Notes:
An RNA of 177 nucleotides, treated with 2A3 and DMS and read out base by base. It was measured as part of the RMDB library M2PK50. The DMS profile rests on 2,542 reads.
RNA sequence: GGGAACGACUCGAGUAGAGUCGAAAACGACAGACGUUCGCGUCUGUCGAAAUACCGAGGUUGUUGCUCGGUAAAUAACAACAACCCUUGGAAACAAGGCAAAAAGGAGAUGGUUCGCCAUCUCCAAGUCCUUUAAUCAGUUCGCUGAUUAAAGGACAAAAGAAACAACAACAACAAC
Reactivity to 2A3 in 0.01 (KOAc 150mM, MgCl2 10mM, bicine 150mM(pH8.5), 24C), signal-to-noise 1, nucleotides 027 to 126: c010g000a000c000a000g000a000c010g000u070u040c190g030c000g130u030c000u000g020u010c000g000a000a020a000u100a010c000c010g010a000g030g040u080u030g020u070u060g060c000u000c000g000g000u000a000a010a010u020a000a000c030a000a030c000a010a060c030c000c000u000u010g000g020a000a040a050c010a000a020g000g040c040a040a090a020a040a030g010g000a000g000a010u000g010g010u030u090c190g030c030c000a000u000c010u000c000c000a000a010
Reactivity to DMS in 0.01 (KOAc 150mM, MgCl2 10mM, bicine 150mM(pH8.5), 24C), signal-to-noise 3, nucleotides 027 to 126: c000g000a030c020a010g000a020c000g000u000u000c200g030c010g050u000c000u020g030u000c000g000a040a070a090u000a090c010c000g010a030g000g000u000u000g000u000u000g040c000u000c040g010g000u000a000a070a070u000a060a070c050a020a060c070a040a090c300c000c000u010u030g000g000a220a090a230c040a020a000g000g000c250a040a030a030a120a080g010g010a000g000a000u000g000g000u000u000c300g020c010c000a000u000c000u000c000c000a010a060